[RMDB]
RNA sequence: GGGAACGACUCGAGUAGAGUCGAAAAGAUAUGGAGCAAUUAGCCGAUAAGAUCUGGUCGGAAACGACCAAGAUCUUUUGACGGCUUGUUGCUCCUAAGUCAAAAGGAGAGGCUUCGGCCUCUCCAAGUACAAGUAUAGCUUCGGCUAUACUUGUACAAAAGAAACAACAACAACAAC
Reactivity to 2A3 in 0.01 (KOAc 150mM, MgCl2 10mM, bicine 150mM(pH8.5), 24C), signal-to-noise 3, nucleotides 027 to 126: g000a000u020a000u070g010g000a010g000c000a010a010u020u000a030g020c010c030g130a160u160a300a000g000a010u000c000u020g000g020u010c000g000g000a020a010a010c000g010a000c000c020a000a040g000a010u000c010u000u020u030u090g110a060c000g000g000c000u000u000g000u000u000g000c000u000c000c000u010a000a000g010u010c000a000a000a020a170g010g010a010g000a010g020g010c030u120u140c300g070g000c030c000u000c000u000c000c000a000a000
Reactivity to DMS in 0.01 (KOAc 150mM, MgCl2 10mM, bicine 150mM(pH8.5), 24C), signal-to-noise 4, nucleotides 027 to 126: g000a000u000a090u010g000g010a010g010c010a000a010u000u000a000g020c000c000g030a110u010a010a010g010a010u000c000u000g000g020u000c000g020g000a020a020a060c000g010a010c010c000a010a040g010a010u000c000u000u000u010u000g020a240c090g010g010c000u000u000g000u000u010g000c000u000c000c000u000a000a060g000u000c010a090a110a160a170g010g000a020g000a020g010g010c010u000u010c290g040g010c000c010u000c010u000c000c000a010a040

Structure probing data (2A3 and DMS) for a 177-nucleotide construct. For 2A3, 11,884 sequencing reads were counted. Source: RMDB library TTRDES, as collected in RNAgym. For DMS the reverse transcriptase was MarathonRT. For DMS, 8,394 sequencing reads were counted. 2A3 adducts were read by reverse transcription with SuperScript II with manganese.